Source: RMDB library M2RFPK, as collected in RNAgym. This 207-nucleotide RNA was probed chemically with 2A3.
RNA sequence: GGGAACGACUCGAGUAGAGUCGAAAAGGUCAGGCCUGAUCGGAAACAGCAGCAGGUGAGUCCGCCUUAUGUGAAGGAUCGUCUGAAACACGAGGAAAUACUGAGCCAACGCAAGACGGUAGCCGAAAAAAUCUAGUUCACUUCGGUGAACUAGAAAGCUAUCGUAUCGGUUCGCCGAUACGAUAGCAAAAGAAACAACAACAACAAC
Reactivity to 2A3 in 0.01 (KOAc 150mM, MgCl2 10mM, bicine 150mM(pH8.5), 24C), signal-to-noise 2, nucleotides 027 to 156: g060g000u010c010a030g030g110c030c020u050g040a090u060c020g000g050a100a070a000c010a000g060c020a000g010c000a020g090g000u050g070a060g070u030c060c030g060c020c000u150u100a090u070g060u060g070a110a010g000g020a060u040c020g020u020c030u050g050a100a100a020c060a010c070g030a070g000g090a130a000a020u130a110c050u060g030a060g030c000c060a030a030c090g000c030a080a000g010a030c010g000g060u030a000g060c010c030g050a140a000a000a000a000a000u000c000u070a000g000u000u000c000a050c000u030u070c200g100g010u000g000a000a000c000u020a000g000a010a000a000
For 2A3, 861 sequencing reads were counted.